The record gives the reactivity of an RNA of 177 nucleotides to 2A3 and DMS. For 2A3, 20,986 sequencing reads were counted. Conditions: 150 mM KOAc, 10 mM MgCl2 and 150 mM bicine (pH 8.5), 24 C. The data come from the RNA Mapping Database (RMDB), library OK1LIB.

RNA sequence: GGGAACGACUCGAGUAGAGUCGAAAAUGUGCACCCCUCGGCAGCUAGACUAGUAUGGAGUGCCGCUGAGUCUGCACGUGGCAGAGGACUAGUCGUGAUGGGCGAAGCUAUAGACGAGUACCGCAGAGUCGAAAAUAAAUUUCGAUUUAUUUUCGACAAAAGAAACAACAACAACAAC
Reactivity to 2A3 in 0.01 (KOAc 150mM, MgCl2 10mM, bicine 150mM(pH8.5), 24C), signal-to-noise 9, nucleotides 027 to 126: u180g020u070g020c030a060c000c010c010c000u020c010g050g030c030a030g020c020u090a040g030a080c010u020a020g090u040a120u220g110g090a170g120u040g020c010c010g000c030u050g030a040g090u040c050u070g020c020a020c080g030u050g030g000c030a020g030a050g090g050a030c010u010a010g020u020c010g040u060g030a140u110g030g020g010c030g030a050a010g000c020u050a040u050a130g040a020c040g010a010g040u060a070c020c040g010c050a010g010a010
Reactivity to DMS in 0.01 (KOAc 150mM, MgCl2 10mM, bicine 150mM(pH8.5), 24C), signal-to-noise 8, nucleotides 027 to 126: u030g010u010g010c050a100c040c020c030c020u000c050g010g010c040a080g000c040u000a080g010a040c020u000a030g020u010a060u030g000g020a160g020u000g000c010c030g000c020u010g000a150g020u010c070u020g000c030a150c100g030u010g000g020c020a050g000a150g010g000a040c010u030a030g000u000c010g020u010g010a060u010g010g000g000c030g000a080a110g010c040u010a080u010a090g000a080c070g000a080g010u010a110c050c050g000c070a070g000a170